An RNA of 177 nucleotides, treated with 2A3 and DMS and read out base by base. The reactions ran in a buffer of 150 mM KOAc, 10 mM MgCl2 and 150 mM bicine (pH 8.5), at 24 C. The DMS profile rests on 2,155 reads.
[RMDB]
RNA sequence: GGGAACGACUCGAGUAGAGUCGAAAAUGGGAAAUAAUCUUCAAAGUCGUUUGGAUGAAUCUUCAGAGUUACUAACUCAAUCUCGUGAAAACUUGGGUGCUGUUGAAGCACGUCUACAAACAACUGACUGAGCAUAUGGAUUCGUCCAUAUGCUCAGAAAAGAAACAACAACAACAAC
Reactivity to 2A3 in 0.01 (KOAc 150mM, MgCl2 10mM, bicine 150mM(pH8.5), 24C), signal-to-noise 2, nucleotides 027 to 126: u060g010g010g060a090a010a050u080a030a070u120c080u140u070c110a160a130a020g010u040c030g020u050u060u020g030g070a040u080g050a090a080u020c050u050u030c060a000g000a010g030u040u080a150c110u130a140a040c020u010c070a080a110u040c040u000c060g150u130g030a080a080a030a040c050u020u050g090g000g000u010g010c020u060g020u210u120g030a020a010g000c000a010c020g040u000c010u070a060c040a000a070a000c000a040a020c020u070g070a060
Reactivity to DMS in 0.01 (KOAc 150mM, MgCl2 10mM, bicine 150mM(pH8.5), 24C), signal-to-noise 3, nucleotides 027 to 126: u000g010g000g010a100a110a100u010a090a070u010c030u000u010c080a080a130a050g010u000c030g000u000u010u000g000g000a080u020g020a090a110u010c040u020u000c040a120g000a060g000u000u010a120c180u000a060a070c080u010c100a050a100u020c070u000c150g020u010g010a080a050a030a060c150u000u010g010g000g010u000g010c010u000g030u010u010g000a080a020g000c150a090c080g000u000c030u010a070c020a010a010a020c060a030a040c040u000g000a180
Source: RMDB library OK2TST, as collected in RNAgym.